[RMDB]
The record gives the reactivity of an RNA of 177 nucleotides to 2A3 and DMS. The 2A3 profile rests on 1,460 reads.
RNA sequence: GGGAACGACUCGAGUAGAGUCGAAAAUUAGAAGCUUGUGCGUGCCAACACUUGCGAAUGAGCUUGCUCAAUCCUUGAGGACAAUCUUCGGGAAUUUGAGGCCUCUUUCCUUCCAGAACGUCAAGUGUGUCUCUGUUACAUUCGUGUAACAGAGACAAAAAGAAACAACAACAACAAC
Reactivity to 2A3 in 0.01 (KOAc 150mM, MgCl2 10mM, bicine 150mM(pH8.5), 24C), signal-to-noise 2, nucleotides 027 to 126: u130u050a050g070a220a030g030c040u040u070g060u090g020c040g040u050g110c070c010a080a020c050a050c050u020u040g020c020g020a010a060u070g000a000g000c000u030u160g000c000u050c020a000a020u010c000c020u100u300g020a020g030g040a050c080a250a160u080c010u020u030c020g000g030g150a100a130u120u050u060g030a040g020g080c010c000u060c000u060u020u000c010c000u010u160c030c000a030g000a220a050c020g060u040c060a020a070g020u030g010
Reactivity to DMS in 0.01 (KOAc 150mM, MgCl2 10mM, bicine 150mM(pH8.5), 24C), signal-to-noise 3, nucleotides 027 to 126: u010u010a100g020a080a100g010c040u000u000g010u000g010c030g010u000g040c100c090a170a080c050a040c050u000u000g000c060g000a110a050u000g030a030g000c070u000u000g010c010u000c030a040a030u010c010c010u000u010g020a020g010g010a210c240a100a130u010c020u010u000c030g000g000g000a060a030u010u000u000g010a040g000g000c300c040u000c050u010u000u000c020c030u000u000c070c110a090g000a070a100c130g000u000c050a020a040g010u010g020
DMS adducts were read by reverse transcription with MarathonRT.
Conditions: 150 mM KOAc, 10 mM MgCl2 and 150 mM bicine (pH 8.5), 24 C.